An RNA of 177 nucleotides, treated with DMS and 2A3 and read out base by base.
Values cover nucleotides 27 to 126.
Conditions: 150 mM KOAc, 10 mM MgCl2 and 150 mM bicine (pH 8.5), 24 C.
The data come from the RNA Mapping Database (RMDB), library OK2TRN.
The 2A3 profile rests on 16,766 reads.
2A3 adducts were read by reverse transcription with SuperScript II with manganese.

RNA sequence: GGGAACGACUCGAGUAGAGUCGAAAAAGGAGGGCCGGGCACCCUUGGGAAACAGGCUUCCUGCUGCCCUGGGGCAGUUCACGGGGGGGCCGUGAAGGUCUCAGCCUCCGUUUAGAGGAGUCUGCCCCUAAUGACAGAUUUUCGAAUCUGUCAUUAGAAAAGAAACAACAACAACAAC
Reactivity to DMS in 0.01 (KOAc 150mM, MgCl2 10mM, bicine 150mM(pH8.5), 24C), signal-to-noise 9, nucleotides 027 to 126: a070g000g010a050g010g010g010c040c030g020g010g010c150a190c030c010c030u000u000g010g010g000a120a080a150c060a050g000g010c090u000u000c010c010u000g000c090u000g000c020c010c040u010g010g000g010g010c010a020g010u000u000c100a040c040g000g000g010g000g000g010g010c010c000g010u010g010a120a180g000g010u000c020u010c090a130g000c020c000u000c000c010g010u000u000u010a090g010a130g010g000a060g010u000c010u000g000c040c010c010
Reactivity to 2A3 in 0.01 (KOAc 150mM, MgCl2 10mM, bicine 150mM(pH8.5), 24C), signal-to-noise 5, nucleotides 027 to 126: a000g080g010a030g000g010g050c050c050g030g050g000c040a040c020c020c030u040u050g110g010g020a060a190a030c020a030g040g000c000u110u040c010c000u030g010c020u030g000c000c000c020u060g120g000g010g000c020a020g020u090u120c050a030c040g000g000g000g000g010g010g000c000c000g010u080g110a130a080g010g000u010c030u010c070a070g040c000c000u000c010c000g010u040u050u110a160g020a070g010g060a020g040u000c020u020g010c000c000c000